[RMDB]
RNA sequence: GGGAACGACUCGAGUAGAGUCGAAAACGUCUUAAAUUAAAUUUCCCUUGCUGACCUCAUCUCAGCAAACAAUAACAAAUAACAAAUAAGAACAGCAGGGAAGGUUGUUCUUAUUUGUUACAAUUAACACUUAGCUAUUGUUCGCAAUAGCUAAGUGAAAAGAAACAACAACAACAAC
Reactivity to DMS in 0.01 (KOAc 150mM, MgCl2 10mM, bicine 150mM(pH8.5), 24C), signal-to-noise 2, nucleotides 027 to 126: c180g000u000c110u000u000a070a090a070u010u010a040a110a140u010u000u010c000c010c030u000u000g020c010u000g000a050c220c170u000c290a080u010c210u000c020a030g010c040a000a040a130c210a060a100u000a040a090c130a070a110a110u000a000a000c000a000a020a000u010a000a000g020a000a000c010a010g010c010a040g020g000g010a090a090g010g010u000u000g010u000u000c000u000u000a000u000u000u000g010u000u000a010c140a080a050u000u010a070a200
Reactivity to 2A3 in 0.01 (KOAc 150mM, MgCl2 10mM, bicine 150mM(pH8.5), 24C), signal-to-noise 6, nucleotides 027 to 126: c030g050u040c060u120u210a180a190a180u100u130a100a120a120u050u140u020c000c000c000u010u020g000c000u010g010a040c020c100u160c140a200u070c050u000c050a020g010c000a000a020a020c060a050a090u230a070a040c060a080a120a030u050a010a000c000a010a000a010u020a010a000g000a000a000c000a000g040c010a020g110g080g120a050a050g100g000u010u010g010u020u000c010u010u000a000u000u010u000g000u000u000a000c010a010a040u100u090a060a010